Background: An RNA of 177 nucleotides, treated with 2A3 and DMS and read out base by base. The 2A3 profile rests on 1,660 reads. Conditions: 150 mM KOAc, 10 mM MgCl2 and 150 mM bicine (pH 8.5), 24 C. It was measured as part of the RMDB library M2PK50.
[RMDB]
RNA sequence: GGGAACGACUCGAGUAGAGUCGAAAACCAUAACAGUUCGCUGUUAUGGACUGUCGGAAUGCGGAAUAAUUAAUCGUCCGCUUACGAUUAAUACCCACUAUAAAGCGUAACACUUCGGUGUUACGAAGGUUCAAAUGGUGUUCGCACCAUUUGAACCAAAAGAAACAACAACAACAAC
Reactivity to 2A3 in 0.01 (KOAc 150mM, MgCl2 10mM, bicine 150mM(pH8.5), 24C), signal-to-noise 2, nucleotides 027 to 126: c010c000a000u000a010a000c000a010g040u020u010c160g110c160u000g000u010u000a000u000g000g030a060c070u080g000u000c000g000g050a150a040u130g000c010g020g090a020a060u150a120a110u300u250a120a090u170c110g030u010c010c000g000c000u000u040a000c010g010a010u000u030a040a010u080a090c010c090c030a000c030u070a080u130a260a040a030g120c000g020u000a020a020c010a000c010u030u040c180g070g000u010g000u000u020a000c010g000a010a020
Reactivity to DMS in 0.01 (KOAc 150mM, MgCl2 10mM, bicine 150mM(pH8.5), 24C), signal-to-noise 1, nucleotides 027 to 126: c000c000a020u000a020a000c000a000g040u000u000c200g030c000u000g000u000u000a000u000g000g000a100c270u000g000u000c020g000g000a160a110u000g030c000g020g000a050a000u000a160a170u020u050a030a130u000c150g000u020c010c050g000c010u000u000a030c000g000a000u000u000a060a110u000a100c040c020c040a160c200u070a030u010a060a090a150g000c000g000u000a000a000c000a030c000u000u000c150g010g020u000g000u000u020a010c000g020a040a020
Record summary
DMS adducts were read by reverse transcription with MarathonRT.